An RNA of 170 nucleotides, treated with DMS and 2A3 and read out base by base.
RNA sequence: GGGAACGACUCGAGUAGAGUCGAAAAGAGACGCUGACGGAAACCCCGGGAACAAGGAAACAGGAGGAGGAUCGGUAGAAAAGAGCGAGACCUCCGAUUCGAGAGCUCCUGGACUCCUCAGCUCUGGUACCCGCAAUGUUCGCAUUGCGGAAAAGAAACAACAACAACAAC
Reactivity to DMS in 0.01 (KOAc 150mM, MgCl2 10mM, bicine 150mM(pH8.5), 24C), signal-to-noise 5, nucleotides 027 to 129: g030a000g010a040c200g000c050u050g010a020c230g050g020a010a080a120c230c100c010c000g000g010g000a020a020c040a130a130g040g020a030a090a130c140a180g000g000a140g020g030a000g040g030a290u030c020g020g050u000a110g070a110a060a130a130g050a090g040c060g030a000g000a120c060c030u050c020c000g000a000u030u010c000g000a040g040a140g000c050u010c020c010u000g000g000a110c050u020c010c020u000c050a040g020c010u000c030u060g030g020u040a050c070
Reactivity to 2A3 in 0.01 (KOAc 150mM, MgCl2 10mM, bicine 150mM(pH8.5), 24C), signal-to-noise 8, nucleotides 027 to 129: g070a000g000a010c110g000c030u010g010a020c110g050g010a100a090a040c030c020c010c010g040g000g010a040a030c040a050a080g100g010a080a080a020c040a030g050g020a020g010g010a030g030g010a050u000c000g020g070u110a070g170a070a190a070a020g100a030g080c020g020a020g060a100c000c000u000c000c000g010a020u010u020c040g020a060g010a040g150c000u000c010c000u010g010g010a010c010u010c000c000u020c020a010g000c020u000c000u000g020g030u080a060c000
Description:
The reactions ran in a buffer of 150 mM KOAc, 10 mM MgCl2 and 150 mM bicine (pH 8.5), at 24 C. For DMS, 12,916 sequencing reads were counted. The 2A3 profile rests on 17,902 reads. High 2A3 reactivity points to a flexible backbone, as in loops and unpaired stretches.